[RMDB]
RNA sequence: GGGAACGACUCGAGUAGAGUCGAAAAGUCGUCGGAUCCGUGGGAUGCUCCUCCCGAUUCCGCCCAUCCCACCCCCCGAGAGGUCCCCCAGGAAUGGCGGGACCCCACUUCAUCGGAGUCCGCGUACCCUAAGUUUCUACUUCGGUAGAAACUUAGGAAAAGAAACAACAACAACAAC
Reactivity to DMS in 0.01 (KOAc 150mM, MgCl2 10mM, bicine 150mM(pH8.5), 24C), signal-to-noise 2, nucleotides 027 to 126: g020u000c030g010u010c010g010g000a280u000c050c040g010u000g020g010g010a050u000g010c160u000c060c030u000c000c000c040g010a170u000u010c100c030g050c050c090c030a030u010c000c000c000a270c030c010c000c000c000c000g010a140g010a050g000g040u000c000c010c000c000c020a030g010g040a150a080u000g000g020c120g020g000g000a010c000c000c000c010a070c200u010u010c100a080u000c070g000g000a030g000u000c010c030g040c070g030u020a110c130

Chemical mapping of a 177-nucleotide RNA with DMS. In probing experiments dimethyl sulfate is read out at A N1 and C N3, which are open when not base-paired. Source: RMDB library VIROID, as collected in RNAgym. The reactions ran in a buffer of 150 mM KOAc, 10 mM MgCl2 and 150 mM bicine (pH 8.5), at 24 C.